[RMDB]
RNA sequence: GGGAACGACUCGAGUAGAGUCGAAAAUGUCUGGAAAACGCUGGUGUCCACAGAGGGAGCCAGCGUUUACAUGCGCGAACACAUCGCAACGUCACGAAACAGCAUCGAGGAGGCCAAACUUCGCCCACAGGCGUGUACCUUUCGAGGUACACGCCUGAAAAGAAACAACAACAACAAC
Reactivity to 2A3 in 0.01 (KOAc 150mM, MgCl2 10mM, bicine 150mM(pH8.5), 24C), signal-to-noise 3, nucleotides 027 to 126: u120g010u000c020u130g050g000a000a020a040a000c000g020c010u000g010g000u080g300u060c010c010a100c180a220g130a210g090g010g080a010g010c010c010a000g000c010g000u000u000u000a010c000a000u130g050c040g000c010g020a060a000c050a000c010a150u040c010g010c040a040a060c070g090u120c010a000c100g010a080a120a020c010a040g030c000a040u020c040g070a020g000g020a000g040g000c010c000a060a040a020c000u060u030c020g030c000c000c000a080
Reactivity to DMS in 0.01 (KOAc 150mM, MgCl2 10mM, bicine 150mM(pH8.5), 24C), signal-to-noise 1, nucleotides 027 to 126: u010g000u000c060u000g000g050a300a030a000a000c020g060c000u000g000g000u000g020u040c000c000a170c300a100g050a300g000g250g000a300g050c000c010a000g000c020g010u000u000u030a000c000a000u000g000c110g010c000g020a040a140c140a050c220a040u040c000g000c020a060a000c060g000u000c030a110c050g100a160a150a030c210a290g090c000a020u000c050g010a090g000g000a040g020g000c010c040a060a040a010c140u000u020c250g040c000c000c090a260

An RNA of 177 nucleotides, treated with 2A3 and DMS and read out base by base. The DMS profile rests on 868 reads. For 2A3 the reverse transcriptase was SuperScript II with manganese.